This 177-nucleotide RNA was probed chemically with DMS.
The reactions ran in a buffer of 150 mM KOAc, 10 mM MgCl2 and 150 mM bicine (pH 8.5), at 24 C.
Values cover nucleotides 27 to 126.
DMS adducts were read by reverse transcription with MarathonRT.

[RMDB]
RNA sequence: GGGAACGACUCGAGUAGAGUCGAAAAUUCGUCCCGUCGGGCUACAGGAGGUCGGUGGAGACGGGGGCAAUCAGGGAGAUUACGGGCAUCCUGGACGGCGCAUGCGAGGCCUGCCUCCUGACUCACGCUAAAUGGGUGCUUUCGAGCACCCAUUUAGAAAAGAAACAACAACAACAAC
Reactivity to DMS in 0.01 (KOAc 150mM, MgCl2 10mM, bicine 150mM(pH8.5), 24C), signal-to-noise 1, nucleotides 027 to 126: u000u000c170g000u000c020c020c010g010u000c040g010g000g000c030u000a060c030a040g000g000a050g000g010u000c150g010g040u000g020g010a220g000a110c060g040g000g000g000g000c120a020a020u010c050a080g020g030g000a150g020a110u020u010a110c080g020g000g020c030a100u020c040c000u000g030g020a120c160g000g000c030g010c120a060u000g000c040g000a150g020g010c030c000u010g030c040c010u000c000c000u000g000a110c010u000c030a080c240g000